[RMDB]
This 207-nucleotide RNA was probed chemically with DMS and 2A3. Conditions: 150 mM KOAc, 10 mM MgCl2 and 150 mM bicine (pH 8.5), 24 C. The 2A3 profile rests on 1,401 reads.
RNA sequence: GGGAACGACUCGAGUAGAGUCGAAAAUAGGGGCAUUUACAAAGGGGUUAUGAUGCAGUACAAAAUCAUACUCACGGCAAGAAAAAUGGGCGGCUUUUGCAAGUCCUGCAUUCAAGAGUUUAGCAUGACGAUUGAAGCGAACGACACCGCCGACGCGGCAACAGAAUUGAUUCGUCAAUUCUGUUGCAAAAGAAACAACAACAACAAC
Reactivity to DMS in 0.01 (KOAc 150mM, MgCl2 10mM, bicine 150mM(pH8.5), 24C), signal-to-noise 1, nucleotides 027 to 156: u000a100g030g020g010g010c040a050u000u010u010a190c040a080a060a250g000g000g020g000u000u000a040u010g000a080u000g000c020a040g000u010a100c090a050a030a040a030u000c050a060u000a050c060u000c050a100c060g020g000c050a050a140g000a020a090a040a070a160u000g000g000g000c020g000g000c060u010u000u020u000g050c060a050a180g000u000c020c050u010g010c060a200u010u000c040a020a080g000a300g040u000u000u000a110g010c180a080u000g020a030c000g010a300u000u010g010a010a040g020c010g010a090a060c040g000a110c100a020c020c000g020c000c010g020a040c060g030c100g030
Reactivity to 2A3 in 0.01 (KOAc 150mM, MgCl2 10mM, bicine 150mM(pH8.5), 24C), signal-to-noise 2, nucleotides 027 to 156: u200a040g000g010g010g020c020a030u050u110u120a040c050a070a030a020g020g010g000g000u070u040a030u040g050a000u030g020c040a030g080u070a040c050a030a160a020a020u040c010a010u050a090c020u040c060a050c030g120g000c050a010a050g050a070a180a030a030a020u090g010g010g000c010g000g000c000u050u120u140u120g010c010a050a000g010u000c000c030u020g040c020a110u040u070c020a040a010g040a030g040u010u050u090a100g030c100a070u160g000a020c010g060a040u000u130g030a040a000g000c040g010a030a020c030g020a020c010a010c000c000g000c000c010g020a050c060g020c030g070

Reactivities are given for positions 27 through 156.